[RMDB]
RNA sequence: GGGAACGACUCGAGUAGAGUCGAAAAGAGUUACCCCUCGAUCUGCGAGGGCGUGCACUGGGGCCACCUCGUCGGUGGGCACCAACCUGCCUACUGAGGUGGGCCAGAUUUUGUCGGCGCCGACCAGACUUAAUCUUUUGUUCGCAAAAGAUUAAGUAAAAGAAACAACAACAACAAC
Reactivity to 2A3 in 0.01 (KOAc 150mM, MgCl2 10mM, bicine 150mM(pH8.5), 24C), signal-to-noise 8, nucleotides 027 to 126: g080a010g030u110u160a160c000c010c010c010u010c010g140a180u040c030u120g060c030g020a040g040g060g020c020g010u030g020c030a000c040u010g010g010g050g150c010c000a010c000c000u000c000g020u010c020g010g010u010g010g000g000c020a100c050c010a010a090c000c000u000g000c000c000u030a070c050u220g010a000g000g000u000g000g000g000c000c000a010g000a010u170u250u080u100g130u100c060g070g010c020g020c020c000g020a030c020c010a010g030
Reactivity to DMS in 0.01 (KOAc 150mM, MgCl2 10mM, bicine 150mM(pH8.5), 24C), signal-to-noise 9, nucleotides 027 to 126: g000a160g010u010u000a120c030c010c010c020u000c020g010a150u010c080u000g010c020g010a110g010g000g020c040g030u000g010c050a130c020u000g010g010g010g020c010c000a020c000c000u000c030g010u000c210g000g010u000g000g000g010c050a060c240c290a100a160c050c040u000g000c000c000u000a020c020u010g010a020g010g020u000g000g000g000c010c010a010g000a090u000u000u010u000g020u010c070g020g010c010g010c010c010g010a140c200c030a070g000
Overview: The data come from the RNA Mapping Database (RMDB), library OK2TST. The record gives the reactivity of an RNA of 177 nucleotides to 2A3 and DMS. The DMS profile rests on 34,172 reads. The 2A3 profile rests on 23,079 reads. As a SHAPE reagent, 2A3 marks flexible, mostly unpaired nucleotides at the ribose 2'-OH. The RNA was probed in 150 mM KOAc, 10 mM MgCl2 and 150 mM bicine (pH 8.5) at 24 C.